[RMDB]
Chemical mapping of a 177-nucleotide RNA with 2A3 and DMS. For DMS the reverse transcriptase was MarathonRT. Source: RMDB libraries RFM100 and RFMREP, as collected in RNAgym. 2A3 adducts were read by reverse transcription with SuperScript II with manganese. As a SHAPE reagent, 2A3 marks flexible, mostly unpaired nucleotides at the ribose 2'-OH. Reactivities are given for positions 27 through 126.
RNA sequence: GGGAACGACUCGAGUAGAGUCGAAAAGAUUGGGAGGAUACCGGAGAUCGAUAGACGACAGCAGCGCGCUUGCGCUUCUGCUCGACUGCGCGGCCCGCGAAGCCCCGAGGUGUCGCGUCCAUCAACCUACAAAUUGCUAAUUCGUUAGCAAUUUGUAAAAAGAAACAACAACAACAAC
Reactivity to 2A3 in 0.01 (KOAc 150mM, MgCl2 10mM, bicine 150mM(pH8.5), 24C), signal-to-noise 9, nucleotides 027 to 126: g070a040u130u150g020g010g010a050g030g010a030u030a080c020c030g030g020a080g020a080u080c040g020a030u060a090g050a030c010g000a010c010a000g010c010a000g000c010g000c010g050c180u190u300g000c020g000c000u030u010c000u010g030c090u000c010g030a040c020u040g000c040g000c020g020g010c010c020c010g040c030g030a060a030g010c010c010c000c010g020a060g000g030u080g010u020c020g000c030g090u000c000c010a050u060c040a040a050c000c000
Reactivity to DMS in 0.01 (KOAc 150mM, MgCl2 10mM, bicine 150mM(pH8.5), 24C), signal-to-noise 9, nucleotides 027 to 126: g000a080u010u010g010g010g000a100g010g000a060u010a050c070c030g010g000a070g000a080u010c050g000a130u020a030g010a120c020g010a040c030a020g010c070a020g010c060g010c020g000c290u030u020g010c000g020c000u000u000c010u010g000c150u000c020g010a070c040u010g010c040g010c240g000g000c030c020c020g000c110g000a150a160g010c040c020c030c030g010a130g000g010u010g020u010c030g010c070g000u000c040c030a040u010c060a050a110c090c050